[RMDB]
Description
The record gives the reactivity of an RNA of 207 nucleotides to DMS and 2A3.
RNA sequence: GGGAACGACUCGAGUAGAGUCGAAAAACAUAUUACGAUAUGAUUCAGAUGGUGUCUUACUGGUUCGUACCUAGGGACAUAAUGGUUUCUUGUUUCCAACCAAAGAACAAGUGGCGAGCCUGAAUAAAAAACUGACUGCCGUUCGCGGCAGUCAGAACAUCAGUAUAUCGUUCGCGAUAUACUGAUGAAAAGAAACAACAACAACAAC
Reactivity to DMS in 0.01 (KOAc 150mM, MgCl2 10mM, bicine 150mM(pH8.5), 24C), signal-to-noise 2, nucleotides 027 to 156: a060c020a080u000a060u000u010a110c110g010a120u000a110u000g020a110u000u000c020a110g010a080u010g020g020u000g020u000c000u000u010a070c060u000g020g000u010u000c100g060u000a140c020c040u010a100g010g010g030a050c030a040u000a070a110u010g020g000u000u000u000c000u000u000g000u010u010u010c010c030a040a040c120c100a030a070a100g030a050a060c030a060a060g030u000g010g010c030g030a140g020c040c020u010g000a060a090u080a010a060a040a080a070a190c010u030g000a000c000u000g030c020c010g060u030u000c300g020c010g000g000c020a000g040u000c010a000g000a030a100
Reactivity to 2A3 in 0.01 (KOAc 150mM, MgCl2 10mM, bicine 150mM(pH8.5), 24C), signal-to-noise 6, nucleotides 027 to 156: a000c020a030u130a050u120u170a060c100g060a030u040a020u140g090a090u070u160c090a090g090a220u140g060g060u030g010u030c030u050u090a110c060u070g010g010u040u090c060g030u110a090c010c030u030a030g030g020g020a010c010a020u150a080a130u110g020g000u000u030u000c000u030u020g020u020u030u030c020c040a100a110c010c010a090a050a020g020a010a020c000a030a020g020u030g080g010c030g010a020g010c000c030u040g080a060a040u130a100a090a010a010a000a030c000u000g000a000c000u000g010c010c010g010u040u060c210g010c000g100g000c000a000g000u000c000a000g000a000a000
For DMS, 2,995 sequencing reads were counted. Conditions: 150 mM KOAc, 10 mM MgCl2 and 150 mM bicine (pH 8.5), 24 C.